[RMDB]
RNA sequence: GGGAACGACUCGAGUAGAGUCGAAAACUUUCAGUAUCCUCUAGCGGAUCGUGGGGGCUGCAACGACAUACCGCGACGAUAUCAGACUGUACAGGCCGUAUCUUUCAGUAUCCUCUAGCGGAUCGUGAAUCUUGUCGAAAUUCGUUUCGACAAGAUUAAAAGAAACAACAACAACAAC
Reactivity to 2A3 in 0.01 (KOAc 150mM, MgCl2 10mM, bicine 150mM(pH8.5), 24C), signal-to-noise 3, nucleotides 027 to 126: c000u030u200u190c060a040g020u130a040u030c000c010u000c020u040a020g000c030g020g040a020u050c040g040u100g010g040g000g000g020c040u040g000c020a070a080c070g100a010c020a050u100a060c010c010g040c010g040a030c050g010a010u010a030u120c050a050g060a150c030u050g020u100a030c020a060g070g000c020c030g000u030a070u070c000u000u120u010c030a030g000u080a030u030c000c020u010c000u010a000g020c030g010g000a020u010c000g030u000g160
Reactivity to DMS in 0.01 (KOAc 150mM, MgCl2 10mM, bicine 150mM(pH8.5), 24C), signal-to-noise 5, nucleotides 027 to 126: c090u000u010u010c080a180g010u000a050u000c010c010u000c030u000a060g010c110g010g010a030u000c070g020u010g010g000g000g000g010c120u000g010c080a090a060c080g010a110c100a110u000a110c030c020g010c050g000a060c120g010a060u000a070u010c070a110g010a070c050u000g000u000a080c120a080g000g030c050c040g000u000a040u010c030u000u000u000c100a120g010u010a040u000c010c000u010c040u000a040g010c120g010g000a020u000c060g010u000g010